Structure probing data (2A3) for a 207-nucleotide construct.

RNA sequence: GGGAACGACUCGAGUAGAGUCGAAAAAUAACGCUGCAUAUCCUUUCUACGAGAAACGACUGAUGCGAGAAAUUCAAGGGGUGCGGCAGCCUGAGCACGUUGCCAUCAUGUGUGAUGGCAAUCGCCGGUGGGCUCGUGAGGCCGGAUUUGCCGAUGACCGAUGCGUAAUGUUCGCAUUACGCAUCGGAAAAGAAACAACAACAACAAC
Reactivity to 2A3 in 0.01 (KOAc 150mM, MgCl2 10mM, bicine 150mM(pH8.5), 24C), signal-to-noise 1, nucleotides 027 to 156: a000u090a050a020c060g010c070u140g030c070a080u080a120u120c050c000u030u130u070c030u060a000c100g070a030g090a240a110a020c120g100a050c060u180g000a030u160g010c050g040a030g050a090a150a070u210u190c050a070a010g030g000g020g010u010g000c000g010g040c000a000g020c050c000u050g030a010g030c000a000c110g000u030u000g000c030c000a000u010c010a050u080g140u090g110u090g150a010u010g000g000c050a000a000u030c050g020c010c000g050g000u000g030g100g000c040u030c080g040u100g030a080g030g010c020c000g000g000a050u030u070u010g060c050c030g010a100u110g070a050
For 2A3, 456 sequencing reads were counted. It was measured as part of the RMDB library OK3TST.